[RMDB]
RNA sequence: GGGAACGACUCGAGUAGAGUCGAAAAGAUAUGGAUGAAGAAGGACUUGGAUUUAAAACCCUAUCGGAAACGAUAGGGCACUUUGUCAGUCCCUUCAUCCUAAGUCAGCGAGUGCUUCGGCACUCAAGGUAGCACCAAGGUUCGCCUUGGUGCUACCAAAAGAAACAACAACAACAAC
Reactivity to 2A3 in 0.01 (KOAc 150mM, MgCl2 10mM, bicine 150mM(pH8.5), 24C), signal-to-noise 1, nucleotides 027 to 126: g070a010u100a020u210g000g010a010u010g000a000a000g000a230a170g040g000a000c060u230u230g180g040a100u300u180u300a300a300a300a300c030c070c000u020a010u010c000g030g130a140a020a000c010g000a000u020a000g000g000g000c000a000c010u040u010u010g010u050c060a010g000u010c000c050c010u000u000c000a010u000c000c000u000a060a030g080u000c050a000g080c060g200a000g000u010g000c000u240u170c280g270g000c020a000c000u000c000a010a000